[RMDB]
RNA sequence: GGGAACGACUCGAGUAGAGUCGAAAAUGGUACGUGGUAUAGCCCAUAGCAAUGCUGAAGUGACUAUCCGUCAGAAUGGCUAUGUCGUUUAUCAACAUUUUGUCGCACCAGGUGCAUUUGAAAUCACACCUGUAUCAAGUUUCGACUUGAUACAGGUAAAAGAAACAACAACAACAAC
Reactivity to DMS in 0.01 (KOAc 150mM, MgCl2 10mM, bicine 150mM(pH8.5), 24C), signal-to-noise 9, nucleotides 027 to 126: u000g010g020u000a020c080g020u000g000g010u000a040u000a060g010c020c040c030a050u000a040g020c050a080a040u010g000c020u000g000a110a060g020u010g020a140c190u000a120u010c120c040g010u010c020a030g010a070a040u000g010g000c020u000a020u000g010u000c090g010u000u000u000a050u010c040a050a090c070a090u000u000u010u000g010u000c090g020c110a080c020c030a060g020g010u000g010c130a060u000u000u000g010a070a060a080u010c100a070c170
Reactivity to 2A3 in 0.01 (KOAc 150mM, MgCl2 10mM, bicine 150mM(pH8.5), 24C), signal-to-noise 9, nucleotides 027 to 126: u080g020g010u070a030c060g050u020g000g000u040a040u060a060g020c020c010c020a030u070a020g030c070a110a140u170g020c020u050g040a110a050g050u030g090a040c020u090a130u150c050c040g020u020c010a030g050a160a110u100g020g000c010u020a010u040g030u010c020g010u040u040u050a080u070c020a010a070c010a040u060u110u080u180g100u080c050g010c030a010c020c040a050g050g070u030g010c020a040u070u070u170g160a100a080a020u110c040a040c010

About this RNA:
The data come from the RNA Mapping Database (RMDB), library OK2TST. An RNA of 177 nucleotides, treated with DMS and 2A3 and read out base by base. The reactions ran in a buffer of 150 mM KOAc, 10 mM MgCl2 and 150 mM bicine (pH 8.5), at 24 C. DMS adducts were read by reverse transcription with MarathonRT. 2A3 adducts were read by reverse transcription with SuperScript II with manganese.